[RMDB]
RNA sequence: GGGAACGACUCGAGUAGAGUCGAAAAAGACAUACGUUCGCGUAUGUCUGACGGGCACCUGACCCUAAGGAAUUGCUCUAUGACAGGACACACUGAUUGUGAUACCUCGAGAUUUCGAUCUCGAGAACGGCUAGAUUACUUUCGAGUAAUCUAGCCGAAAAGAAACAACAACAACAAC
Reactivity to DMS in 0.01 (KOAc 150mM, MgCl2 10mM, bicine 150mM(pH8.5), 24C), signal-to-noise 2, nucleotides 027 to 126: a000g010a010c010a000u000a000c000g010u000u000c250g020c010g030u010a010u000g010u000c000u000g010a090c180g010g000g000c030a050c010c020u000g020a150c010c010c030u000a100a050g000g000a150a090u020u000g030c030u000c010u030a060u010g020a150c090a060g000g020a130c020a060c030a060c060u010g000a130u000u000g000u000g020a130u000a100c200c020u000c010g010a010g010a010u000u000u000c150g020a040u000c000u000c000g000a020g000a050a070
Reactivity to 2A3 in 0.01 (KOAc 150mM, MgCl2 10mM, bicine 150mM(pH8.5), 24C), signal-to-noise 2, nucleotides 027 to 126: a000g010a020c000a010u010a000c010g010u000u110c240g010c000g110u010a000u000g010u000c000u010g000a010c030g040g000g030c020a020c040c010u040g140a130c010c020c000u040a050a010g100g000a090a080u130u100g020c010u000c050u050a150u110g120a090c020a030g050g010a060c010a010c000a000c070u080g090a180u270u050g010u070g040a090u130a160c000c010u000c000g020a000g010a050u040u070u090c170g050a010u010c000u020c000g000a000g000a010a010